[RMDB]
RNA sequence: GGGAACGACUCGAGUAGAGUCGAAAAUGGUACUUUGCAGCCUGGGCCGCGGGCGCGUGGGCUAAGCGACGUGCUAUGUGGUUGUGGGGUCCUGCUAGUACAGGAAAAACCCUCCUCGCAGCAGCUACUCCAGCUUCAGUUUCGACUGAAGCUGGAGAAAAGAAACAACAACAACAAC
Reactivity to 2A3 in 0.01 (KOAc 150mM, MgCl2 10mM, bicine 150mM(pH8.5), 24C), signal-to-noise 1, nucleotides 027 to 126: u050g000g000u020a010c030u030u030u160g000c050a010g000c010c000u000g000g140g000c010c000g000c040g000g030g010c070g000c050g070u070g000g030g120c110u160a220a040g000c060g030a030c030g000u030g020c000u010a160u230g070u100g050g050u020u200g140u050g080g050g000g040u030c010c010u000g000c020u020a060g000u050a060c010a010g000g000a000a000a000a070a100c010c010c010u010c000c000u020c000g070c000a010g000c040a000g030c000u000a090
Chemical mapping of a 177-nucleotide RNA with 2A3. Source: RMDB library OK1LIB, as collected in RNAgym. The RNA was probed in 150 mM KOAc, 10 mM MgCl2 and 150 mM bicine (pH 8.5) at 24 C. For 2A3 the reverse transcriptase was SuperScript II with manganese.